[RMDB]
RNA sequence: GGGAACGACUCGAGUAGAGUCGAAAAGAUAUGGAUACGGACUCUUUUGACGGCUACACGAGUAUAAGGUUUAUCGGAAACGAUAAACCUUAUACUCGUGAGCCGAUAAGAGUCGUAUCCUAAGUCACAUUACCUCAUCCUUCGGGAUGAGGUAAUGAAAAGAAACAACAACAACAAC
Reactivity to DMS in 0.01 (KOAc 150mM, MgCl2 10mM, bicine 150mM(pH8.5), 24C), signal-to-noise 1, nucleotides 027 to 126: g000a040u010a300u020g000g000a020u000a060c000g020g020a060c000u000c000u010u010u000u010g020a170c180g010g000c000u010a100c020a000c000g000a030g030u000a000u000a000a000g010g010u000u000u000a000u000c000g000g010a140a090a190c000g000a000u000a000a000a010c000c000u000u000a000u000a010c020u000c000g010u000g020a030g010c010c000g030a010u000a000a000g020a030g010u000c010g020u000a000u010c000c020u000a010a040g000u000c080a260
Overview: An RNA of 177 nucleotides, treated with DMS and read out base by base. For DMS the reverse transcriptase was MarathonRT. The data come from the RNA Mapping Database (RMDB), library TTRINS. The RNA was probed in 150 mM KOAc, 10 mM MgCl2 and 150 mM bicine (pH 8.5) at 24 C. For DMS, 1,762 sequencing reads were counted.